This 177-nucleotide RNA was probed chemically with DMS. Source: RMDB library OK2TST, as collected in RNAgym. Values cover nucleotides 27 to 126. The RNA was probed in 150 mM KOAc, 10 mM MgCl2 and 150 mM bicine (pH 8.5) at 24 C. DMS adducts were read by reverse transcription with MarathonRT.
RNA sequence: GGGAACGACUCGAGUAGAGUCGAAAAUGUAGAUCUUUAUAUCUCCAGACAUCAACAUGAGCUUGCAGGGCAAAAUGCGCCAGGUUCAGAGGGAAUCAAAACGCCUGAUUGGUACUGGCCAAACGAAUGACUAGGAGUACUUCGGUACUCCUAGUCAAAAAGAAACAACAACAACAAC
Reactivity to DMS in 0.01 (KOAc 150mM, MgCl2 10mM, bicine 150mM(pH8.5), 24C), signal-to-noise 1, nucleotides 027 to 126: u010g000u010a080g000a050u000c040u020u000u000a150u000a070u000c000u020c010c020a130g000a040c060a040u000c100a070a040c060a110u010g000a130g050c040u000u020g010c100a060g000g000g000c130a040a050a070a100u000g010c150g020c020c000a000g000g010u000u020c000a020g020a280g000g000g000a040a020u000c050a030a070a030a100c300g000c000c020u010g000a130u030u000g010g010u020a000c080u000g010g000c000c040a130a040a100c150g020a150a140